[RMDB]
RNA sequence: GGGAACGACUCGAGUAGAGUCGAAAACGAGACGCUAGAUUCCUAUGCGCGACAAUGCAAAGAUAACUUUGUGAAGAUUGAGGAAAGGUUUAAUUCUCCUGCUGACAGGAGCAAUUUUGAGUUAAUGGACAGCUUGAAAUUUCGAUUUCAAGCUGUCAAAAGAAACAACAACAACAAC
Reactivity to DMS in 0.01 (KOAc 150mM, MgCl2 10mM, bicine 150mM(pH8.5), 24C), signal-to-noise 4, nucleotides 027 to 126: c110g010a170g020a150c030g000c020u000a130g000a210u000u000c030c010u000a090u020g000c060g020c060g000a130c170a080a080u010g020c020a000a030a020g010a160u010a100a110c020u000u020u000g020u000g010a090a090g020a140u000u010g010a080g010g010a040a060a080g000g020u010u010u010a040a040u000u000c000u000c010c000u000g010c230u000g010a110c030a020g020g010a010g000c200a010a020u000u000u020u010g000a100g000u010u020a090a100u020g020
Reactivity to 2A3 in 0.01 (KOAc 150mM, MgCl2 10mM, bicine 150mM(pH8.5), 24C), signal-to-noise 2, nucleotides 027 to 126: c050g020a020g060a030c010g020c010u020a010g050a220u040u080c010c000u010a030u180g010c030g000c010g070a060c070a020a130u120g010c010a090a000a040g030a040u200a300a220c040u100u000u000g020u050g040a020a060g060a120u110u170g040a050g040g060a030a000a060g050g000u050u110u050a050a010u030u000c000u000c000c000u030g040c160u240g050a190c010a000g000g030a010g000c010a010a020u070u090u050u040g140a160g010u010u160a080a000u100g040